[RMDB]
RNA sequence: GGGAACGACUCGAGUAGAGUCGAAAACAACAUAACACCUGUUUAUCCUCACGGAUUGAGAGUGCUCUAUGAAUCACUACCUUUUCAUAAGGCUGAAAAGGUUGUCAAUAUGAUAUCAGGUACAAAGCCAACUACUAGGCUUCGGCCUAGUAGUUGGAAAAGAAACAACAACAACAAC
Reactivity to DMS in 0.01 (KOAc 150mM, MgCl2 10mM, bicine 150mM(pH8.5), 24C), signal-to-noise 1, nucleotides 027 to 126: c050a050a100c150a050u040a100a050c120a010c010c000u010g000u000u000u000a040u000c010c100u000c100a140c300g000g020a000u020u000g000a110g000a110g010u000g030c170u000c090u000a080u010g020a180a170u000c020a080c040u010a030c010c000u000u000u010u020c000a020u030a080a140g020g030c200u010g000a000a000a000a010g000g020u000u010g020u000c070a050a090u000a060u000g000a060u000a040u000c040a040g010g000u000a060c180a040a080a140g000
Reactivity to 2A3 in 0.01 (KOAc 150mM, MgCl2 10mM, bicine 150mM(pH8.5), 24C), signal-to-noise 2, nucleotides 027 to 126: c010a030a000c040a080u160a230a090c050a010c060c000u010g050u130u130u060a020u000c020c020u130c030a030c180g090g030a050u010u090g000a070g010a000g060u020g030c000u030c030u100a210u210g140a040a040u060c030a000c030u050a000c020c020u010u000u000u000c000a010u130a280a210g240g010c120u050g000a000a000a000a020g000g060u060u040g020u020c020a020a110u060a090u250g020a030u040a040u020c020a020g030g020u050a030c040a000a110a010g030
The record gives the reactivity of an RNA of 177 nucleotides to DMS and 2A3. The 2A3 profile rests on 925 reads. For 2A3 the reverse transcriptase was SuperScript II with manganese. For DMS, 674 sequencing reads were counted. Source: RMDB library OK2TRN, as collected in RNAgym.